[RMDB]
The data come from the RNA Mapping Database (RMDB), library OK3TST. The record gives the reactivity of an RNA of 207 nucleotides to DMS and 2A3. Values cover nucleotides 27 to 156. For DMS the reverse transcriptase was MarathonRT.
RNA sequence: GGGAACGACUCGAGUAGAGUCGAAAAACCUGGUCAAACCGGGGUCCGGUCCAGUAAUCGCUCAGCAGGAUUUGCUUUGCUGUUUCCCUGGGCAGGUUUCGCAUAUCACCGGUGUAGCCAUGUGCGCGAGCUGUGGUUUGCGUGAUGCCCCAGCGGGCCGGUAAUUAACAUUCGUGUUAAUUACCGGAAAAGAAACAACAACAACAAC
Reactivity to DMS in 0.01 (KOAc 150mM, MgCl2 10mM, bicine 150mM(pH8.5), 24C), signal-to-noise 1, nucleotides 027 to 156: a050c020c020u000g040g050u000c080a060a160a180c030c010g040g000g000g030u000c030c020g000g010u000c010c020a100g010u000a040a040u000c090g030c040u000c040a040g060c040a120g020g000a190u000u010u000g010c000u010u000u000g010c000u000g040u010u000u010c040c030c010u030g000g030g050c000a110g020g000u000u000u000c010g000c060a100u000a100u000c020a060c030c040g000g000u000g010u010a300g000c040c020a140u010g020u000g040c040g050c100g010a220g010c020u010g010u000g040g010u000u000u000g030c060g030u000g010a120u000g010c000c020c000c030a080g020c060g000g000g050
Reactivity to 2A3 in 0.01 (KOAc 150mM, MgCl2 10mM, bicine 150mM(pH8.5), 24C), signal-to-noise 3, nucleotides 027 to 156: a010c030c010u040g030g030u150c080a120a010a040c050c010g000g010g020g000u030c030c010g010g000u010c020c000a020g020u100a060a040u050c010g010c000u030c010a020g000c010a050g070g220a300u220u200u120g030c020u040u030u060g000c000u040g060u000u010u030c050c050c010u000g010g010g000c010a010g030g030u030u160u130c020g000c040a020u030a020u100c060a060c070c100g040g020u050g050u100a020g000c010c040a120u190g110u140g060c090g010c030g060a100g020c040u020g040u050g030g040u030u070u040g010c040g010u030g050a080u100g010c030c020c030c020a020g030c070g010g040g010